[RMDB]
RNA sequence: GGGAACGACUCGAGUAGAGUCGAAAACCAGGAGAGUGUCCAGGCUCAGACCAGGAUAUAAGAAGAACAGUGUCCCCAAACUACAUUCCUGGGAACCUGCCCCUCCCUGGCAGGUGUGUAGAGCAAACAUGAUCAGUACGUUCGCGUACUGAUCAUGAAAAGAAACAACAACAACAAC
Reactivity to DMS in 0.01 (KOAc 150mM, MgCl2 10mM, bicine 150mM(pH8.5), 24C), signal-to-noise 5, nucleotides 027 to 126: c040c010a120g000g020a100g000a100g030u000g010u000c030c050a060g020g000c020u000c090a110g020a220c010c010a050g000g010a060u000a050u020a080a100g010a090a080g010a060a080c130a080g000u000g010u000c020c010c010c070a090a070a110c060u000a040c070a080u000u010c010c010u000g000g000g000a110a030c000c000u000g000c030c010c070c110u000c030c010c010u000g000g000c000a010g000g010u000g010u000g010u000a050g010a130g010c120a090a050a150
Reactivity to 2A3 in 0.01 (KOAc 150mM, MgCl2 10mM, bicine 150mM(pH8.5), 24C), signal-to-noise 2, nucleotides 027 to 126: c000c020a000g040g050a090g000a010g030u070g030u000c020c020a030g040g030c030u030c100a050g090a150c000c030a020g000g030a000u020a000u040a150a080g220a120a010g040a070a030c060a120g090u020g130u200c030c050c000c020a050a130a010c000u030a010c020a060u030u060c010c000u000g000g010g010a010a000c010c000u000g000c000c000c000c020u050c000c010c000u000g010g000c000a010g010g000u010g000u010g020u040a080g020a040g010c110a060a040a040
Chemical mapping of a 177-nucleotide RNA with DMS and 2A3. The reactions ran in a buffer of 150 mM KOAc, 10 mM MgCl2 and 150 mM bicine (pH 8.5), at 24 C. 2A3 adducts were read by reverse transcription with SuperScript II with manganese. For DMS the reverse transcriptase was MarathonRT. For 2A3, 2,327 sequencing reads were counted. The data come from the RNA Mapping Database (RMDB), library OK2TST. For DMS, 4,802 sequencing reads were counted.